Source: RMDB library TTRDES, as collected in RNAgym. This 177-nucleotide RNA was probed chemically with 2A3 and DMS. DMS adducts were read by reverse transcription with MarathonRT. 2A3 adducts were read by reverse transcription with SuperScript II with manganese. The reactions ran in a buffer of 150 mM KOAc, 10 mM MgCl2 and 150 mM bicine (pH 8.5), at 24 C.

RNA sequence: GGGAACGACUCGAGUAGAGUCGAAAAGAUAUGGAGGGAGGCCUGACAUGACUAAGUCUCGGAAACGAGACUAUAGUCAACAGCAGGCUCCCUCCUAAGUCAAAACGUCUUCGUUCGCGAAGACGAACAGAGCAAAACAGUUCGCUGUUUUGCUCUGAAAAGAAACAACAACAACAAC
Reactivity to 2A3 in 0.01 (KOAc 150mM, MgCl2 10mM, bicine 150mM(pH8.5), 24C), signal-to-noise 2, nucleotides 027 to 126: g010a010u040a000u060g000g000a030g010g000g020a020g130g300c010c010u010g000a070c060a300u300g010a000c000u010a000a010g000u030c000u000c020g010g030a020a020a000c020g020a020g000a000c000u000a030u010a030g000u000c020a050a020c130a030g000c000a000g020g000c000u010c000c000c010u000c000c000u000a000a000g000u000c000a000a000a010a070c010g000u000c010u010u000c010g080u090u120c270g030c020g220a000a000g000a000c000g010a020a000
Reactivity to DMS in 0.01 (KOAc 150mM, MgCl2 10mM, bicine 150mM(pH8.5), 24C), signal-to-noise 2, nucleotides 027 to 126: g010a030u010a200u020g000g000a020g010g000g010a060g030g030c000c000u000g000a030c150a240u000g040a010c000u000a020a040g010u000c010u010c010g010g010a050a050a060c000g010a030g000a010c000u000a020u000a010g000u000c000a050a030c270a210g000c000a000g000g000c000u000c000c000c000u000c000c020u000a000a080g020u010c010a140a080a090a160c010g010u000c010u010u000c000g010u020u000c210g050c030g040a010a000g020a020c010g000a020a100